[RMDB]
Structure probing data (DMS and 2A3) for a 177-nucleotide construct.
For DMS, 23,076 sequencing reads were counted.
2A3 adducts were read by reverse transcription with SuperScript II with manganese.
The data come from the RNA Mapping Database (RMDB), library OK2TST.
The 2A3 profile rests on 39,350 reads.
RNA sequence: GGGAACGACUCGAGUAGAGUCGAAAAUCGUCAAGCCGAACCUCGGAGAUUCCAGUUUCGGGAUCACGCAGAAGAGCGUGGUGUGGUCGCUCGAUGAGCUUUCCGCCUGCAUCUCCGAGAUCAGGGAACAUUACACUUGUUUCGACAAGUGUAAUGUAAAAGAAACAACAACAACAAC
Reactivity to DMS in 0.01 (KOAc 150mM, MgCl2 10mM, bicine 150mM(pH8.5), 24C), signal-to-noise 9, nucleotides 027 to 126: u000c060g010u010c110a130a150g010c020c010g000a170a140c180c000u000c010g010g000a050g010a020u000u000c120c020a050g010u000u010u010c080g010g000g000a010u000c030a030c030g010c010a090g010a150a130g010a110g010c020g030u000g000g020u000g020u000g010g020u000c160g010c010u010c010g010a190u010g000a040g010c040u000u010u000c010c020g020c300c010u010g000c300a020u000c010u000c020c010g000a030g010a020u000c060a250g000g000g010a120
Reactivity to 2A3 in 0.01 (KOAc 150mM, MgCl2 10mM, bicine 150mM(pH8.5), 24C), signal-to-noise 9, nucleotides 027 to 126: u100c030g110u070c070a060a060g120c010c000g010a020a020c010c000u000c010g010g000a010g000a020u090u030c090c020a010g040u050u140u240c050g020g010g010a010u040c010a000c050g010c010a050g090a300a030g080a090g040c030g020u030g000g080u070g030u060g060g060u080c030g000c010u020c030g300a300u270g020a010g010c010u070u080u000c010c020g020c010c010u020g000c000a000u000c000u000c000c010g010a010g000a010u020c050a010g000g010g010a010